An RNA of 207 nucleotides, treated with DMS and 2A3 and read out base by base.
RNA sequence: GGGAACGACUCGAGUAGAGUCGAAAACAGUGCCCCCAGUUGCAUAGCUCUGGGAGAUGACAUCCACCUUGAAUCUCCACAAUGGAACCUCUAGGGCUAUGACUUAGCGUCCACUGUAAUGUUACCACCUGCAGUUGCACAAGGGGCCCUGGAUGAACUAAAAUCCAGUAUUCGUACUGGAUUUUAGAAAAGAAACAACAACAACAAC
Reactivity to DMS in 0.01 (KOAc 150mM, MgCl2 10mM, bicine 150mM(pH8.5), 24C), signal-to-noise 3, nucleotides 027 to 156: c010a080g030u000g020c010c000c000c010c030a120g020u000u000g020c010a070u000a070g010c020u010c000u010g020g040g020a020g020a020u000g000a150c060a110u000c020c010a090c040c050u030u010g000a170a140u010c060u010c080c030a110c300a120a040u010g000g010a100a210c030c030u010c000u010a080g000g010g000c020u000a020u010g010a040c040u010u000a080g050c140g000u010c020c050a060c010u010g010u000a090a110u010g010u000u000a100c090c060a100c100c030u000g020c020a100g000u000u000g000c030a090c030a080a090g020g020g050g020c020c050c010u000g010g010a120u000g000a100a210
Reactivity to 2A3 in 0.01 (KOAc 150mM, MgCl2 10mM, bicine 150mM(pH8.5), 24C), signal-to-noise 3, nucleotides 027 to 156: c000a000g010u000g020c000c000c000c000c000a050g020u130u030g040c000a000u000a010g000c000u000c000u060g080g050g000a010g000a020u130g000a010c000a010u000c010c010a070c050c050u070u050g080a130a060u130c110u040c130c030a090c050a060a040u060g010g190a300a300c020c000u010c000u000a010g000g010g000c000u010a020u030g000a000c000u060u140a030g050c020g040u000c010c020a000c000u000g010u010a090a030u130g040u120u120a090c030c020a030c070c010u010g020c000a010g000u030u010g030c030a010c020a080a040g000g000g000g000c030c000c000u000g010g010a060u110g120a060a060

The RNA was probed in 150 mM KOAc, 10 mM MgCl2 and 150 mM bicine (pH 8.5) at 24 C. Source: RMDB library OK3TST, as collected in RNAgym.